[RMDB]
RNA sequence: GGGAACGACUCGAGUAGAGUCGAAAAUCGUUCAAAGCAGCUGACACUCAUAUCUUUCGUCCUUGAGCACACUCCACUCCGAAAAGCUGCCUGAGUUGUCAAAAACCAUGUCAUUUACAAACUCGUCCAGUAGUAUGUACUUCGGUACAUACUACUGAAAAGAAACAACAACAACAAC
Reactivity to 2A3 in 0.01 (KOAc 150mM, MgCl2 10mM, bicine 150mM(pH8.5), 24C), signal-to-noise 5, nucleotides 027 to 126: u020c000g020u020u050c020a060a050a090g010c010a020g010c040u030g040a030c010a020c040u060c030a070u040a080u130c040u010u090u070c050g060u030c010c020u040u100g060a020g020c030a020c000a010c050u010c020c000a030c020u020c010c010g020a050a040a050a030g010c030u040g020c010c020u020g010a030g010u050u050g010u050c020a050a040a020a030a060c050c010a040u060g050u050c020a060u030u070u080a100c070a040a130a050c030u030c040g080u070c070
Reactivity to DMS in 0.01 (KOAc 150mM, MgCl2 10mM, bicine 150mM(pH8.5), 24C), signal-to-noise 8, nucleotides 027 to 126: u000c050g010u000u000c030a090a120a140g010c030a040g010c050u000g010a110c100a090c070u020c060a060u000a050u000c030u000u000u000c080g020u000c030c030u000u000g010a100g010c030a060c090a080c030u000c030c030a090c030u000c030c030g000a070a070a090a090g010c030u000g020c040c050u000g010a070g020u000u000g010u000c090a040a050a060a090a070c040c030a030u010g010u010c060a080u010u000u000a060c140a070a060a090c050u000c070g010u000c090
This 177-nucleotide RNA was probed chemically with 2A3 and DMS.
The DMS profile rests on 10,680 reads.
The RNA was probed in 150 mM KOAc, 10 mM MgCl2 and 150 mM bicine (pH 8.5) at 24 C.
Reactivities are given for positions 27 through 126.
Source: RMDB library OK2TRN, as collected in RNAgym.